[RMDB]
RNA sequence: GGGAACGACUCGAGUAGAGUCGAAAACCAGCAGCCAUGACGUACCAGGCUGCGGUGCGGCUCGCCGCACAGGUCAUCCCUCAUCGGGCGCGUCCUGCGUCCUUCCACGCCAACCCACAAGGGAUCUAAAACACGUUGGGCUUCGGCCCAACGUGAACUUCUGAAAUUAGUUCGCUAAUUUCAGAAGAAAAGAAACAACAACAACAAC
Reactivity to 2A3 in 0.01 (KOAc 150mM, MgCl2 10mM, bicine 150mM(pH8.5), 24C), signal-to-noise 2, nucleotides 027 to 156: c020c010a020g020c000a000g000c010c000a230u130g050a120c120g070u170a100c020c060a040g000g020c000u000g010c000g010g000u000g000c020g010g000c030u070c150g160c040c000g000c020a000c000a000g040g080u050c030a030u050c020c010c010u030c030a140u210c070g000g020g020c010g010c010g040u130c030c110u150g000c010g050u010c000c000u050u060c040c010a050c010g040c030c050a060a090c030c020c000a080c070a160a120g040g010g010a030u050c060u220a050a090a020a060c000a000c000g000u000u010g000g030g000c020u040u080c100g070g000c030c000c000a000a000c000g000u000g000a000a000